[RMDB]
Description:
An RNA of 170 nucleotides, treated with DMS and 2A3 and read out base by base. The data come from the RNA Mapping Database (RMDB), library 15KLIB. Conditions: 150 mM KOAc, 10 mM MgCl2 and 150 mM bicine (pH 8.5), 24 C.
RNA sequence: GGGAACGACUCGAGUAGAGUCGAAAACUAAUGGUACACAUACCGGUUCAGCAUUUGAUGGUACUAUGUAUGGUGCCUUUAUGGAUAAACAAGUGCACCAAGUUCAGUUAACAGACAAAUACUGCAGAGAGAAGAUGCUUCGGCAUCUUCAAAAGAAACAACAACAACAAC
Reactivity to DMS in 0.01 (KOAc 150mM, MgCl2 10mM, bicine 150mM(pH8.5), 24C), signal-to-noise 6, nucleotides 027 to 129: c020u010a070a090u050g000g000u020a040c240a070c160a110u020a000c020c100g020g050u040u000c110a050g030c030a100u010u000u000g000a140u030g010g020u000a040c050u010a070u030g030u000a150u030g000g000u000g020c030c030u010u050u040a090u080g050g030a210u070a020a050a130c190a040a050g010u120g060c040a030c030c020a070a110g020u040u010c060a030g020u000u000a070a040c070a020g000a100c100a040a020a040u000a000c040u040g030c160a080g000a040g030a170
Reactivity to 2A3 in 0.01 (KOAc 150mM, MgCl2 10mM, bicine 150mM(pH8.5), 24C), signal-to-noise 7, nucleotides 027 to 129: c000u030a070a020u140g010g010u040a020c160a000c020a110u140a060c030c010g060g020u070u100c010a030g010c080a130u050u070u120g080a070u070g020g040u080a010c010u060a030u110g050u040a100u090g010g020u010g000c000c000u010u020u020a070u090g060g010a030u130a110a110a010c090a060a040g010u060g130c000a020c010c000a030a030g030u060u060c030a030g000u020u040a070a020c010a010g180a060c010a030a050a010u050a050c020u030g020c060a020g050a000g010a000